The record gives the reactivity of an RNA of 177 nucleotides to DMS and 2A3.
The RNA was probed in 150 mM KOAc, 10 mM MgCl2 and 150 mM bicine (pH 8.5) at 24 C.
The data come from the RNA Mapping Database (RMDB), libraries RFM100 and RFMREP.

RNA sequence: GGGAACGACUCGAGUAGAGUCGAAAACAUCACCUUCUUCUUGUCUGAACUCAUCAACAUUUCAGCCAAAUUACUGUGCUGCUAAGUCACUGGGAAGAUCAGGACCCCACACCAAGAUGAUCAUCUUACUCAAGUGGAUAUUCGUAUCCACUUGAGUAAAAGAAACAACAACAACAAC
Reactivity to DMS in 0.01 (KOAc 150mM, MgCl2 10mM, bicine 150mM(pH8.5), 24C), signal-to-noise 2, nucleotides 027 to 126: c180a170u010c060a080c020c020u000u000c080u000u000c050u000u020g000u000c050u000g000a090a150c140u000c050a110u050c120a150a120c170a020u000u010u000c030a050g000c000c090a020a120a140u020u090a060c180u010g020u000g000c000u000g010c130u010a090a050g040u000c040a130c090u010g040g000g020a050a010g000a090u010c040a030g000g000a130c080c040c010c010a080c100a080c060c060a060a010g000a070u000g020a050u000c060a180u000c060u000u010
Reactivity to 2A3 in 0.01 (KOAc 150mM, MgCl2 10mM, bicine 150mM(pH8.5), 24C), signal-to-noise 9, nucleotides 027 to 126: c030a050u060c010a040c010c000u030u030c010u030u010c010u050u070g050u010c020u020g050a070a050c020u030c060a140u070c050a120a100c030a120u050u110u060c020a020g010c020c000a050a090a100u140u110a110c080u040g060u120g050c010u010g030c020u080a080a030g040u040c010a020c080u030g000g010g040a050a040g010a060u060c040a010g040g000a050c010c010c000c000a050c010a010c010c020a050a020g020a080u080g020a020u090c020a020u030c040u010u010